RNA sequence: GGGAACGACUCGAGUAGAGUCGAAAACCUUGGGUUUCCUAUCACGAAAAAAUCCGUGAAAGAUGGCAAAAGACAGUCGCACCCGAGGACAUAGUUUUGCUUCCGGGAGACAUUUCUUGGGCAAUGCGUAUUGCCCGAUCUUCGGAUCGGGCAAUACAAAAGAAACAACAACAACAAC
Reactivity to DMS in 0.01 (KOAc 150mM, MgCl2 10mM, bicine 150mM(pH8.5), 24C), signal-to-noise 1, nucleotides 027 to 126: c010c010u000u020g000g020g010u000u000u000c010c000u000a300u000c020a000c050g070a010a000a090a080a170a130u010c130c020g000u000g010a070a070a060g010a100u010g030g010c030a030a020a030a070g000a120c200a020g030u020c040g020c110a110c030c010c010g000a030g010g010a030c110a020u010a110g010u000u000u000u000g000c010u020u010c020c020g010g000g000a130g020a070c050a020u000u020u000c020u000u000g000g010g000c100a100a080u000g000c300